Background:
This 177-nucleotide RNA was probed chemically with 2A3 and DMS. For DMS the reverse transcriptase was MarathonRT.
[RMDB]
RNA sequence: GGGAACGACUCGAGUAGAGUCGAAAAAAAAAAGAUAUGGACACGUUACAAAGAGCGACGAUCUCACAGUCCUUCGGAAACGAAGGAUCACAGGGGAGCUCAAAAAGACGUGUCCUAAGUCAAAAAAGAUAACUAGAAGGUUCGCCUUCUAGUUAUCAAAAGAAACAACAACAACAAC
Reactivity to 2A3 in 0.01 (KOAc 150mM, MgCl2 10mM, bicine 150mM(pH8.5), 24C), signal-to-noise 2, nucleotides 027 to 126: a010a010a000a000a000a030g070a030u090a060u150g000g000a000c010a000c000g000u040u070a060c090a090a250a040g000a010g040c020g300a300c040g040a170u050c040u040c020a060c030a040g000u010c000c000u000u010c000g020g010a060a020a040c000g000a010a000g020g010a010u020c000a010c060a000g010g000g030g010a030g010c000u030c060a040a120a000a000a000g040a010c000g010u000g000u000c010c000u010a010a000g000u030c030a040a040a020a050a020a190
Reactivity to DMS in 0.01 (KOAc 150mM, MgCl2 10mM, bicine 150mM(pH8.5), 24C), signal-to-noise 2, nucleotides 027 to 126: a000a050a080a080a070a030g010a060u000a300u010g000g010a030c010a010c000g000u000u000a080c170a030a120a080g010a010g030c010g010a130c230g000a080u010c000u000c040a080c300a260g000u010c000c000u010u000c000g000g010a120a080a180c000g010a000a000g010g000a000u000c040a050c300a060g010g000g000g010a070g020c000u000c000a020a040a110a140a080g000a010c010g020u000g000u000c000c000u000a000a070g000u010c000a000a040a120a050a060a100